Description
Structure probing data (DMS and 2A3) for a 177-nucleotide construct. For 2A3 the reverse transcriptase was SuperScript II with manganese. Source: RMDB library RFM100, as collected in RNAgym.
[RMDB]
RNA sequence: GGGAACGACUCGAGUAGAGUCGAAAACUAAUCAAACCCCGUGAUAGCUGGUUCUCUUCGAAAUGCAUUUAGGUGCAGCGUCACGUGCUGAUGCGCGGGGGUAGAGCACUGACAAGGCUAGGGGGCAUACACUCCGCAAUUUCGAUUGCGGAGUGUAAAAAGAAACAACAACAACAAC
Reactivity to DMS in 0.01 (KOAc 150mM, MgCl2 10mM, bicine 150mM(pH8.5), 24C), signal-to-noise 2, nucleotides 027 to 126: c010u020a090a080u010c080a060a050a160c010c000c030c010g080u020g020a090u010a010g000c050u000g000g020u000u010c010u020c040u040u030c100g010a080a050a080u010g000c000a090u000u000u040a090g050g000u010g000c010a040g000c120g040u020c040a010c130g020u000g000c010u010g000a120u050g040c060g000c000g030g000g000g020g000u010a060g000a040g010c030a010c020u000g060a150c130a100a180g020g000c020u020a060g020g070g000g000g000c240a110
Reactivity to 2A3 in 0.01 (KOAc 150mM, MgCl2 10mM, bicine 150mM(pH8.5), 24C), signal-to-noise 3, nucleotides 027 to 126: c010u040a020a030u090c080a100a060a020c000c000c000c000g030u040g120a180u070a070g010c020u020g040g000u110u020c050u000c000u080u060c050g070a060a060a110u070g010c030a030u020u030u230a190g100g010u020g020c010a060g010c010g150u040c020a070c120g030u010g000c010u030g010a220u240g010c030g000c000g040g000g000g000g010u000a030g000a000g000c010a000c020u100g000a060c050a040a090g140g010c000u010a020g010g000g070g000g000c020a020